An RNA of 177 nucleotides, treated with 2A3 and DMS and read out base by base. Conditions: 150 mM KOAc, 10 mM MgCl2 and 150 mM bicine (pH 8.5), 24 C. For DMS the reverse transcriptase was MarathonRT. Source: RMDB library OK2TST, as collected in RNAgym. For 2A3 the reverse transcriptase was SuperScript II with manganese. The DMS profile rests on 11,584 reads. The 2A3 profile rests on 6,465 reads.
RNA sequence: GGGAACGACUCGAGUAGAGUCGAAAAGCUUGCAAGGCUCAUAACCUUGAGGUCGUGUUUGGUUCGAAUCCCACCUCCGCAUCCAAUUUUAAGAAGUAUAUGGGGCUAUAGCUCAGUUGGGAGAGCGCCAUAGUAUCACUUUCGAGUGAUACUAUGGAAAAGAAACAACAACAACAAC
Reactivity to 2A3 in 0.01 (KOAc 150mM, MgCl2 10mM, bicine 150mM(pH8.5), 24C), signal-to-noise 5, nucleotides 027 to 126: g030c020u050u160g090c010a040a010g020g000c000u010c020a090u120a150a080c030c000u010u050g020a030g020g050u050c070g020u020g090u110u150u160g100g000u060u090c070g030a050a070u010c000c000c000a020c020c010u040c020c020g020c030a050u020c010c020a050a040u040u100u120u190a160a110g040a100a010g090u050a080u030a060u280g030g010g000g000c020u100a080u090a200g010c000u000c040a070g030u090u050g060g020g010a100g010a010g010c030g000
Reactivity to DMS in 0.01 (KOAc 150mM, MgCl2 10mM, bicine 150mM(pH8.5), 24C), signal-to-noise 7, nucleotides 027 to 126: g020c020u000u000g020c030a030a050g040g010c010u010c280a100u010a080a130c040c020u000u000g010a070g010g010u010c070g010u010g010u010u010u000g010g010u010u000c030g000a140a120u010c030c010c020a180c080c030u000c030c030g010c080a080u000c020c040a050a060u010u000u000u010a070a140g000a080a110g010u010a060u010a080u000g010g010g000g010c080u000a080u010a080g000c010u000c020a050g010u000u000g000g010g010a100g010a050g020c090g010